[RMDB]
The record gives the reactivity of an RNA of 170 nucleotides to DMS and 2A3. DMS adducts were read by reverse transcription with MarathonRT. For 2A3 the reverse transcriptase was SuperScript II with manganese.
RNA sequence: GGGAACGACUCGAGUAGAGUCGAAAAUCUGCAAUCUUAUGCCUGCUGGACUCAUUCCUGCGGUUAUGAUUAUGUCUACAACCCUUUCUUUGUCGAUGUUCAACAGUGGGGUUAUGUAGGCAAUCUUAUACGCUGCUCUUCGGAGCAGCGAAAAGAAACAACAACAACAAC
Reactivity to DMS in 0.01 (KOAc 150mM, MgCl2 10mM, bicine 150mM(pH8.5), 24C), signal-to-noise 4, nucleotides 027 to 129: u050c070u080g060c060a070a060u070c080u010u100a010u060g000c080c020u010g040c080u050g060g000a120c250u010c230a170u040u010c010c020u010g080c020g030g000u050u020a050u080g010a020u060u010a090u060g050u050c000u020a000c050a120a090c090c000c000u020u040u060c050u000u050u000g000u000c060g060a200u060g020u030u070c050a010a050c010a060g090u020g010g020g050g000u150u020a080u020g030u020a000g000g050c000a040a000u030c040u010u040a100u010a080
Reactivity to 2A3 in 0.01 (KOAc 150mM, MgCl2 10mM, bicine 150mM(pH8.5), 24C), signal-to-noise 5, nucleotides 027 to 129: u040c060u000g080c040a030a080u040c020u170u170a100u130g050c000c020u100g000c020u070g010g030a040c040u040c150a130u150u110c000c000u060g010c000g020g060u070u090a020u060g060a010u020u060a100u180g020u040c000u000a000c010a030a070c000c000c000u050u130u120c010u030u070u000g000u030c040g290a300u200g110u150u140c040a020a020c000a110g000u000g000g010g000g030u050u020a090u110g010u000a000g000g000c000a000a030u000c000u000u000a070u030a060
For DMS, 5,132 sequencing reads were counted. It was measured as part of the RMDB library 15KLIB.